[RMDB]
RNA sequence: GGGAACGACUCGAGUAGAGUCGAAAAAUCACUCUUAAAAGAAGAGGUUGAUAGAGUCGGGAUAUAAGUACCAAGCUUUUGCGAGGUAUUAAGUCCACGACUACUAAUUGAUCGAAAAUCUACAAUCUACCUCUCUAGGAUUCGUCCUAGAGAGGUAAAAAGAAACAACAACAACAAC
Reactivity to DMS in 0.01 (KOAc 150mM, MgCl2 10mM, bicine 150mM(pH8.5), 24C), signal-to-noise 3, nucleotides 027 to 126: a080u030c060a100c050u010c010u010u020a070a100a150a210g020a070a010g010a110g000g000u050u000g000a020u000a020g010a010g020u000c000g000g020g000a010u010a030u000a050a080g000u000a010c000c000a040a300g020c000u040u040u050u020g010c020g040a300g000g000u000a000u000u030a070a200g000u000c010c000a120c000g000a010c000u020a010c000u000a100a080u000u020g020a020u010c030g000a060a050a100a080u000c020u010a110c100a050a090u020c150
Reactivity to 2A3 in 0.01 (KOAc 150mM, MgCl2 10mM, bicine 150mM(pH8.5), 24C), signal-to-noise 5, nucleotides 027 to 126: a000u090c030a050c030u080c020u080u170a150a220a060a020g100a060a020g080a010g040g040u070u100g030a030u020a040g040a010g000u000c000g000g000g020a000u030a000u030a140a060g010u000a000c000c010a010a010g010c030u080u230u300u300g020c030g010a010g000g030u030a000u030u050a030a000g000u000c000c020a120c090g010a000c000u010a010c000u040a120a060u030u050g050a040u050c100g080a040a070a030a180u080c060u100a040c050a040a080u040c020